This 170-nucleotide RNA was probed chemically with DMS and 2A3. It was measured as part of the RMDB library 15KLIB. The RNA was probed in 150 mM KOAc, 10 mM MgCl2 and 150 mM bicine (pH 8.5) at 24 C.
[RMDB]
RNA sequence: GGGAACGACUCGAGUAGAGUCGAAAAGUACACUCGAGGAGUGGAAGGCGCUGCCCGGGGGGAACCGGAUUUACCUACGGGAAUCCCUGGGUUCCUCUGAUGUCCAGUCCCUCUCCCGUCCGAGUGAAAACGACGGCCUUCGGGCCGUCGAAAAGAAACAACAACAACAAC
Reactivity to DMS in 0.01 (KOAc 150mM, MgCl2 10mM, bicine 150mM(pH8.5), 24C), signal-to-noise 5, nucleotides 027 to 129: g020u040a150c000a000c080u000c010g040a130g020g040a070g020u010g010g000a120a120g000g000c250g050c120u030g000c060c030c000g020g070g030g010g020g010a280a060c000c010g030g000a060u030u010u110a100c070c110u030a130c090g010g000g010a030a160u070c000c000c000u030g010g000g070u000u010c070c060u030c080u020g050a130u080g040u000c000c020a070g020u040c040c030c040u000c020u010c030c000c000g030u020c050c070g010a040g020u050g010a000a060a100a040
Reactivity to 2A3 in 0.01 (KOAc 150mM, MgCl2 10mM, bicine 150mM(pH8.5), 24C), signal-to-noise 3, nucleotides 027 to 129: g020u040a110c020a000c000u010c040g010a020g000g010a000g010u150g020g050a070a070g030g000c050g020c050u030g010c000c020c010g000g000g000g000g000g000a020a040c010c000g010g000a000u010u030u240a220c020c010u040a090c090g010g000g030a010a000u030c030c020c030u010g030g010g000u000u030c010c020u010c040u040g150a170u070g080u010c030c000a000g030u040c000c000c000u030c010u000c000c000c000g080u050c070c000g010a010g010u030g020a070a020a000a030